About this RNA: Structure probing data (DMS) for a 177-nucleotide construct. The RNA was probed in 150 mM KOAc, 10 mM MgCl2 and 150 mM bicine (pH 8.5) at 24 C. DMS adducts were read by reverse transcription with MarathonRT.

[RMDB]
RNA sequence: GGGAACGACUCGAGUAGAGUCGAAAAGAUAUGGAAUUCGCGAAGAACUAGGGAGGAAACGAAGGAGAAAUCGGAAACGAUUUCUUGUUGACGUUUCCGAAGAACUAGGGAGCGAAUUCCUAAGUCAUCUUGAUCAUAGCUUCGGCUAUGAUCAAGAAAAAGAAACAACAACAACAAC
Reactivity to DMS in 0.01 (KOAc 150mM, MgCl2 10mM, bicine 150mM(pH8.5), 24C), signal-to-noise 1, nucleotides 027 to 126: g020a110u000a300u000g020g010a030a000u000u000c000g070c040g000a200a060g010a180a220c000u010a000g000g000g000a090g030g030a000a020a000c020g030a300a150g010g060a000g000a000a020a000u010c000g020g000a130a080a130c000g040a000u000u000u000c000u000u040g020u000u010g000a220c070g000u000u000u020c000c000g000a000a050g000a120a130c010u000a010g010g000g000a060g000c020g000a010a000u000u000c000c020u000a000a090g020u010c060a050